[RMDB]
Overview
This 177-nucleotide RNA was probed chemically with 2A3 and DMS.
RNA sequence: GGGAACGACUCGAGUAGAGUCGAAAAACAAAGGAGGCCCGGUUACCUAUAUAUAGCUUUUCAUACCGGCGCGCGCGCGCUGGCUGGCCUCCGCAUUGAAUAGACUAGGUACCCGCGCGCGAAAAAACUAAUCUUAUGUAUUCGUACAUAAGAUUAGAAAAGAAACAACAACAACAAC
Reactivity to 2A3 in 0.01 (KOAc 150mM, MgCl2 10mM, bicine 150mM(pH8.5), 24C), signal-to-noise 1, nucleotides 027 to 126: a010c020a020a080a020g000g010a000g010g030c100c010c000g000g020u080u070a020c000c000u030a030u040a020u060a030u060a300g130c080u170u160u090u220c110a060u100a200c070c020g050g000c040g000c020g000c010g000c000g020c000g000c060u060g060g000c040u000g000g000c020c000u000c000c010g000c000a020u060u210g040a090a100u080a110g060a050c050u030a030g000g020u030a020c000c020c000g000c000g000c000g020c000g070a050a010a000a030a000a020
Reactivity to DMS in 0.01 (KOAc 150mM, MgCl2 10mM, bicine 150mM(pH8.5), 24C), signal-to-noise 2, nucleotides 027 to 126: a170c040a050a100a150g000g000a030g000g000c000c030c240g020g010u000u010a030c010c010u010a100u020a190u010a130u010a060g010c090u000u010u000u010c100a100u000a120c040c030g000g010c070g030c010g020c020g010c030g000c030g020c070u000g010g010c070u000g000g010c000c010u010c010c020g000c110a050u000u010g000a090a080u000a070g020a120c090u000a030g010g000u000a070c020c030c070g010c010g010c000g010c000g010a000a050a050a100a080a070
Record summary
Reactivities are given for positions 27 through 126. Conditions: 150 mM KOAc, 10 mM MgCl2 and 150 mM bicine (pH 8.5), 24 C. 2A3 adducts were read by reverse transcription with SuperScript II with manganese.